This 177-nucleotide RNA was probed chemically with 2A3.
For 2A3, 1,025 sequencing reads were counted.
The reactions ran in a buffer of 150 mM KOAc, 10 mM MgCl2 and 150 mM bicine (pH 8.5), at 24 C.

[RMDB]
RNA sequence: GGGAACGACUCGAGUAGAGUCGAAAACUGCCCGCUGACGGCCAGGGACAGCAGGGACACCAGUCCCCACUUCAUCAUCUUAUUCACAAUAAACCUCCUGAACUUUGCCGGUAUUAGGCACAAUACCCCUCGCAUCGUACUUCGGUACGAUGCGAGGAAAAGAAACAACAACAACAAC
Reactivity to 2A3 in 0.01 (KOAc 150mM, MgCl2 10mM, bicine 150mM(pH8.5), 24C), signal-to-noise 2, nucleotides 027 to 126: c000u040g020c000c000c000g110c080u060g090a000c010g000g030c030c030a050g080g100g000a050c000a010g010c000a050g020g000g020a010c080a090c100c000a000g060u090c050c040c000c000a060c000u150u100c010a060u040c010a040u010c030u130u050a080u170u060c040a050c000a080a200u060a090a060a100c000c080u110c010c010u050g000a040a030c040u060u080u190g040c040c000g030g000u050a120u000u210a060g020g010c000a000c020a050a030u110a080c000c070
2A3 is a SHAPE reagent: it acylates the 2'-hydroxyl of flexible nucleotides of all four kinds. Source: RMDB library OK1LIB, as collected in RNAgym.